[RMDB]
An RNA of 177 nucleotides, treated with 2A3 and DMS and read out base by base.
RNA sequence: GGGAACGACUCGAGUAGAGUCGAAAAUAUAGCGCGCAUUAUAUAGCCGCGAUAUAUUAGCGCUAUAGCUAAUUACGAUAUCGCGCGCGAUGCCGUACGCGUAAUAUAUGCAUAUGCAUCGGCCGCGCGCAACACGCGGUUUCGACCGCGUGUUGCGAAAAGAAACAACAACAACAAC
Reactivity to 2A3 in 0.01 (KOAc 150mM, MgCl2 10mM, bicine 150mM(pH8.5), 24C), signal-to-noise 3, nucleotides 027 to 126: u090a010u040a030g020c020g000c000g000c060a040u210u130a060u050a030u050a160g090c080c020g030c000g010a000u000a000u000a000u020u050a030g000c050g000c070u110a030u040a230g030c020u060a060a100u180u140a080c100g050a060u010a020u150c050g000c020g000c010g020c000g030a010u050g040c050c010g030u030a030c060g000c000g030u020a210a070u200a090u020a000u170g040c010a030u010a010u110g000c010a000u000c000g070g000c040c020g010c000g020
Reactivity to DMS in 0.01 (KOAc 150mM, MgCl2 10mM, bicine 150mM(pH8.5), 24C), signal-to-noise 3, nucleotides 027 to 126: u000a030u010a060g010c010g020c030g020c160a100u000u000a050u000a060u010a130g000c090c030g000c010g010a050u000a000u000a030u000u000a130g000c000g010c130u000a050u000a080g010c040u000a050a070u010u010a090c200g000a090u010a060u010c030g020c020g000c070g010c020g010a030u000g020c060c070g020u000a050c070g000c010g010u000a080a090u000a110u020a050u010g000c060a100u000a020u000g000c010a020u000c000g020g000c080c040g000c000g020